[RMDB]
RNA sequence: GGGAACGACUCGAGUAGAGUCGAAAAGGGUGGGCCUAGGGACCUACCUCCAGGGUCAUUUUAAGGGUGGGACAACAUUCUACUCUUUCUGGGAGGGCUAAGCCUGGGAUCCAUGGGAAGAUGGGUCUCAGUCUAAUACUUUCGAGUAUUAGACUGAAAAAGAAACAACAACAACAAC
Reactivity to 2A3 in 0.01 (KOAc 150mM, MgCl2 10mM, bicine 150mM(pH8.5), 24C), signal-to-noise 3, nucleotides 027 to 126: g040g060g090u140g030g010g030c020c060u080a060g040g030g020a060c000c000u010a070c010c000u000c020c010a010g050g000g000u070c070a110u090u120u090u280a070a070g030g100g030u220g050g010g020a010c020a080a000c000a090u080u050c020u040a090c030u010c000u050u140u040c070u060g050g010g090a140g020g030g000c050u070a080a000g050c000c030u030g020g010g000a010u000c030c010a020u070g100g010g090a060a090g040a050u040g020g000g000u030c010
Reactivity to DMS in 0.01 (KOAc 150mM, MgCl2 10mM, bicine 150mM(pH8.5), 24C), signal-to-noise 4, nucleotides 027 to 126: g010g000g000u010g000g020g040c120c070u010a080g010g020g000a090c040c000u000a030c000c010u000c040c020a140g000g000g010u020c090a080u010u010u000u000a080a110g000g020g040u010g020g010g000a140c120a050a080c100a300u000u000c030u000a030c040u000c030u000u010u000c100u010g000g000g010a070g000g000g010c140u020a040a060g010c020c030u000g000g010g000a020u000c010c010a010u000g010g000g010a110a120g010a080u000g010g000g000u000c040